[RMDB]
RNA sequence: GGGAACGACUCGAGUAGAGUCGAAAAGGAAAUAUGGCUGUGAGAGGAAUAAAACAUAAUUCCUACCUUUAAGGAACUCAGAGAAGUGAAUUAAAGGAAGUCACAGAUCAGGCAACCAACCACACAAAGUUUCUAAGAGCAAACUGUUCAGGUCGGACCACGCACGUGGUUUCGACCACGUGCGUGGAAAAGAAACAACAACAACAAC
Reactivity to 2A3 in 0.01 (KOAc 150mM, MgCl2 10mM, bicine 150mM(pH8.5), 24C), signal-to-noise 1, nucleotides 027 to 156: g060g000a000a230a030u140a040u050g070g000c000u010g000u000g000a060g000a000g220g040a100a000u170a010a190a020a000c030a050u150a120a120u110u000c000c000u000a040c010c000u010u010u040a000a100g000g000a050a010c000u000c140a080g080a100g040a300a000g090u030g010a060a060u000u000a020a010a000g000g010a080a000g070u000c000a000c000a000g030a040u070c030a020g060g000c000a030a030c000c000a000a020c010c010a050c000a000c030a080a150a000g010u020u070u000c060u160a120a040g070a000g030c050a070a160a150c140u140g010u130u090c050a030g000g070u060c060g000g040a020